RNA sequence: GGGAACGACUCGAGUAGAGUCGAAAAGAUAUGGACGGAUCGCGAUAAGAAUCAUUCGGAAACGAAUGUAUUCUUUUGACGCGAGAAGUCCUAAGUCAAAACGAUGUCAACUUCGGUUGACAUCGAACUAAUCACCGGAGUUCGCUCCGGUGAUUAGAAAAGAAACAACAACAACAAC
Reactivity to 2A3 in 0.01 (KOAc 150mM, MgCl2 10mM, bicine 150mM(pH8.5), 24C), signal-to-noise 2, nucleotides 027 to 126: g020a030u060a040u090g000g000a010c020g040g100a030u020c030g020c010g060a110u090a230a010g000a000a000u000c000a010u020u020c010g000g020a050a030a030c000g010a020a010u030g010u050a020u020u030c000u040u040u010u180g090a020c020g000c000g000a000g000a000a000g010u000c000c000u010a050a020g030u030c020a020a000a090a110c030g010a000u020g000u000c000a000a010c010u050u080c300g170g000u000u000g010a000c000a000u000c000g000a020a000
Reactivity to DMS in 0.01 (KOAc 150mM, MgCl2 10mM, bicine 150mM(pH8.5), 24C), signal-to-noise 2, nucleotides 027 to 126: g000a030u010a300u010g020g020a020c000g010g030a240u000c010g030c010g010a180u010a000a020g030a010a000u000c010a000u000u000c000g010g010a070a090a210c000g000a020a000u000g000u020a010u000u000c000u010u000u010u000g010a140c040g040c000g000a000g000a300a190g000u000c000c000u020a010a060g020u000c010a070a060a090a250c000g000a000u010g000u010c000a010a010c000u000u000c170g060g000u000u000g010a000c000a010u000c000g000a010a100